[RMDB]
RNA sequence: GGGAACGACUCGAGUAGAGUCGAAAAAGUAUCGGGUUCGCCCGAUACUGUUGGCGCGCCGCCUUUGUCCUGUCGCGCGUAUAUUGCGCGCGAUAUACGCGCAUGUGGGGUCGUUCGCGACCCCAAAGUUACCAGUACGUUUCGACGUACUGGUAACAAAAGAAACAACAACAACAAC
Reactivity to DMS in 0.01 (KOAc 150mM, MgCl2 10mM, bicine 150mM(pH8.5), 24C), signal-to-noise 3, nucleotides 027 to 126: a010g020u000a010u000c000g010g010g010u000u010c260g020c010c000c000g000a000u000a000c000u000g000u000u010g000g000c010g000c010g010c020c060g010c130c090u000u000u010g010u010c010c020u010g000u010c120g010c020g010c000g010u000a030u000a030u000u010g000c000g000c020g010c000g000a000u000a010u000a010c020g010c020g010c010a200u010g000u000g010g000g000g000u000c000g010u000u010c190g010c000g010a010c010c000c000c000a000a010a060
Reactivity to 2A3 in 0.01 (KOAc 150mM, MgCl2 10mM, bicine 150mM(pH8.5), 24C), signal-to-noise 2, nucleotides 027 to 126: a020g000u000a000u000c010g000g040g000u050u040c180g080c030c000c030g000a000u000a000c000u010g000u030u050g010g020c000g000c010g000c030c000g080c050c050u090u090u100g060u050c010c010u110g090u150c080g020c000g000c000g000u000a020u000a000u020u060g010c020g010c020g000c000g010a000u000a000u000a000c010g000c000g020c020a030u070g030u050g050g000g020g010u010c030g060u070u080c260g020c020g110a000c010c000c000c000a010a000a020
The record gives the reactivity of an RNA of 177 nucleotides to DMS and 2A3. It was measured as part of the RMDB library M2PK50. For DMS the reverse transcriptase was MarathonRT. 2A3 adducts were read by reverse transcription with SuperScript II with manganese. The reactions ran in a buffer of 150 mM KOAc, 10 mM MgCl2 and 150 mM bicine (pH 8.5), at 24 C.